Conditions: 150 mM KOAc, 10 mM MgCl2 and 150 mM bicine (pH 8.5), 24 C. The record gives the reactivity of an RNA of 177 nucleotides to 2A3 and DMS. It was measured as part of the RMDB library OK2TRN.

[RMDB]
RNA sequence: GGGAACGACUCGAGUAGAGUCGAAAAAGGCAAUUAUGGAGCUUGUAGAGGAAGACAUAGAAAAUCUUCGUGGGUAAGAAUAUGGCCUCCUAUAUCACCGAAAUAUACAUUAGAAUACUACACGAUCGAUCUUAGACUAGUUCGCUAGUCUAAGAUCAAAAGAAACAACAACAACAAC
Reactivity to 2A3 in 0.01 (KOAc 150mM, MgCl2 10mM, bicine 150mM(pH8.5), 24C), signal-to-noise 3, nucleotides 027 to 126: a000g050g000c050a040a050u180u030a060u240g040g030a060g020c030u070u050g090u100a070g010a020g090g050a030a030g060a030c010a010u110a060g130a040a170a080a070u020c060u050u050c080g020u130g000g100g010u040a050a050g040a070a060u090a070u110g040g000c050c000u060c020c000u120a130u010a020u080c060a050c040c020g030a010a090a000u170a010u030a030c040a040u060u160a040g050a130a020u070a140c050u070a050c070a010c060g050a040u130c060
Reactivity to DMS in 0.01 (KOAc 150mM, MgCl2 10mM, bicine 150mM(pH8.5), 24C), signal-to-noise 4, nucleotides 027 to 126: a060g010g010c050a100a070u000u010a090u000g020g010a140g040c050u000u000g020u010a090g020a080g000g010a020a060g000a030c040a040u010a090g000a130a090a130a100u000c040u010u000c050g040u000g000g000g010u000a030a060g010a090a100u000a040u010g000g010c020c010u000c030c000u000a070u000a060u010c090a120c060c020g020a050a070a090u010a060u000a060c090a070u000u000a090g010a070a050u000a050c070u010a060c080a040c110g010a050u020c150
Reactivities are given for positions 27 through 126. The 2A3 profile rests on 2,560 reads.